[RMDB]
RNA sequence: GGGAACGACUCGAGUAGAGUCGAAAAUGAUUAGUUGUUUUACAAAGUUAGAUUCUUUGGAAAGUAUUAUCAAUGGAUACAUUUCUAGCUUGAAUAGUUUUUCAAUGUAAAGUGAAACGACAAGAAAUACGUCAUUUAGUUUCGACUAAAUGACGUAAAAAGAAACAACAACAACAAC
Reactivity to DMS in 0.01 (KOAc 150mM, MgCl2 10mM, bicine 150mM(pH8.5), 24C), signal-to-noise 5, nucleotides 027 to 126: u030g000a100u030u020a120g000u000u000g000u000u000u020u020a040c060a080a090a070g010u000u000a080g010a080u010u020c010u020u030u000g000g010a020a020a060g010u000a000u010u010a250u030c130a110a090u030g000g000a020u010a010c050a080u000u010u000c010u000a050g000c060u020u010g010a020a030u020a070g000u040u020u010u000u000c010a010a070u020g000u030a070a080a130g020u010g000a010a020a030c010g010a040c040a050a060g000a070a050a110
Reactivity to 2A3 in 0.01 (KOAc 150mM, MgCl2 10mM, bicine 150mM(pH8.5), 24C), signal-to-noise 4, nucleotides 027 to 126: u230g020a110u090u120a090g000u000u020g010u010u050u000u000a020c050a020a110a080g020u090u050a100g060a160u180u010c030u080u110u030g030g010a080a040a000g070u110a010u080u020a080u170c150a100a070u100g070g000a020u060a120c050a120u060u030u000c020u000a070g020c030u020u000g030a030a010u070a110g060u010u060u040u010u070c070a080a080u080g160u270a220a020a100g010u010g040a010a000a020c010g040a010c020a020a040g030a030a100a000